An RNA of 177 nucleotides, treated with DMS and 2A3 and read out base by base. DMS adducts were read by reverse transcription with MarathonRT. For 2A3, 1,054 sequencing reads were counted. For DMS, 1,096 sequencing reads were counted. Values cover nucleotides 27 to 126. The reactions ran in a buffer of 150 mM KOAc, 10 mM MgCl2 and 150 mM bicine (pH 8.5), at 24 C. Source: RMDB library OK2TRN, as collected in RNAgym.

RNA sequence: GGGAACGACUCGAGUAGAGUCGAAAAGAAUACUCAGACAAAGCCCAGACUUUGGAGAGCGCCACAUUGCGUUAUUCCUUAAAUCCCAAUGGGUGAAGAAAAUUGAGAAAAUCGGCGCAGUCAACGAGUCAUUUAUACCGUUCGCGGUAUAAAUGACAAAAGAAACAACAACAACAAC
Reactivity to DMS in 0.01 (KOAc 150mM, MgCl2 10mM, bicine 150mM(pH8.5), 24C), signal-to-noise 2, nucleotides 027 to 126: g000a230a070u000a070c030u010c020a050g020a280c090a040a120a300g030c000c060c050a070g000a160c100u000u020u000g000g000a120g000a040g020c000g050c020c220a050c300a030u010u000g010c000g020u010u000a110u020u000c030c030u000u000a090a070a120u010c000c010c000a090a100u000g000g000g010u000g000a050a120g020a050a060a020a120u020u010g000a050g010a130a020a120a040u000c070g000g040c090g030c090a060g010u020c090a040a050c150g000a150
Reactivity to 2A3 in 0.01 (KOAc 150mM, MgCl2 10mM, bicine 150mM(pH8.5), 24C), signal-to-noise 1, nucleotides 027 to 126: g010a060a080u120a140c010u000c020a000g020a140c040a100a060a020g010c020c000c030a030g060a080c060u000u080u100g040g000a030g020a010g000c000g020c020c000a150c020a230u100u140g010c040g000u000u080a160u180u090c000c000u030u070a110a140a110u060c000c030c000a020a010u050g000g000g000u030g000a060a010g070a020a040a070a080u190u110g020a060g000a140a140a000a070u110c030g050g000c040g000c060a000g050u100c010a030a030c020g010a040